Chemical mapping of a 177-nucleotide RNA with 2A3 and DMS. The reactions ran in a buffer of 150 mM KOAc, 10 mM MgCl2 and 150 mM bicine (pH 8.5), at 24 C.

RNA sequence: GGGAACGACUCGAGUAGAGUCGAAAAGAUAUGGAGUGGUUUGUGGGAGAUUAUCGUUCGGAAACGAACGUAAGAUCUUUGAUCACAUCGACCACUCCUAAGUCAAAAGGAAACGUUCGCGUUUCCACGUUCAAAGGUACUUCGGUACCUUUGAACGAAAAGAAACAACAACAACAAC
Reactivity to 2A3 in 0.01 (KOAc 150mM, MgCl2 10mM, bicine 150mM(pH8.5), 24C), signal-to-noise 2, nucleotides 027 to 126: g030a010u070a030u180g010g000a020g020u010g000g000u030u010u250g020u010g010g110g000a070g020a030u000u000a110u210c000g010u000u020c010g000g060a070a070a040c010g010a010a020c020g010u030a160a110g010a010u000c020u240u130u150g060a120u080c020a010c020a030u190c110g030a020c000c000a010c010u030c000c000u000a030a000g020u000c000a020a060a000a080g010g000a000a010a000c020g010u090u110c300g000c030g180u020u000u000c030c000a010
Reactivity to DMS in 0.01 (KOAc 150mM, MgCl2 10mM, bicine 150mM(pH8.5), 24C), signal-to-noise 2, nucleotides 027 to 126: g000a030u010a300u000g010g010a010g040u000g000g070u000u000u010g020u010g020g000g020a070g010a020u010u010a220u000c000g050u010u010c020g010g010a090a090a170c000g000a010a020c000g000u000a140a270g000a010u000c010u000u000u020g000a090u010c040a000c020a070u040c300g020a030c000c000a010c000u010c000c000u010a000a050g010u000c040a080a100a070a230g000g010a010a000a000c010g040u000u000c270g000c030g030u000u000u010c000c000a150